The record gives the reactivity of an RNA of 177 nucleotides to 2A3 and DMS. For 2A3 the reverse transcriptase was SuperScript II with manganese. For DMS the reverse transcriptase was MarathonRT. Values cover nucleotides 27 to 126. Conditions: 150 mM KOAc, 10 mM MgCl2 and 150 mM bicine (pH 8.5), 24 C. Source: RMDB libraries RFM100 and RFMREP, as collected in RNAgym.
RNA sequence: GGGAACGACUCGAGUAGAGUCGAAAACCCUGACGGGUGAUUGACCUGGUUGAUGAUUAGUCCCGCACCGCGUGAGGCAGGAAACUGAGCAGCGAAAAGGGGCAGCUGCGGACGGCACAAGGAUCGCUGCACAAUAAAGAUUCGUCUUUAUUGUGCAAAAAGAAACAACAACAACAAC
Reactivity to 2A3 in 0.01 (KOAc 150mM, MgCl2 10mM, bicine 150mM(pH8.5), 24C), signal-to-noise 7, nucleotides 027 to 126: c000c000c010u030g090a040c040g020g000g020u040g070a260u040u110g070a050c020c010u030g130g040u040u070g030a110u030g010a050u030u130a030g040u050c010c020c000g020c030a040c030c040g020c020g040u060g040a060g040g020c030a020g000g050a070a060a030c030u040g030a030g040c010a000g010c020g050a030a050a050a070g010g000g010g000c010a000g000c010u020g000c010g020g020a020c010g010g020c020a020c040a090a060g040g000a050u050c040g000c060
Reactivity to DMS in 0.01 (KOAc 150mM, MgCl2 10mM, bicine 150mM(pH8.5), 24C), signal-to-noise 9, nucleotides 027 to 126: c010c000c000u010g030a140c140g000g000g020u000g010a140u010u010g010a070c030c020u000g000g010u000u000g020a070u010g000a110u010u010a100g010u000c010c000c020g000c100a130c080c050g010c060g020u020g010a120g010g020c020a050g000g010a090a080a120c060u010g000a100g010c030a110g000c030g000a040a050a090a110g000g000g000g010c050a090g000c030u000g010c040g000g000a090c060g000g000c040a060c100a070a080g010g000a090u010c070g010c130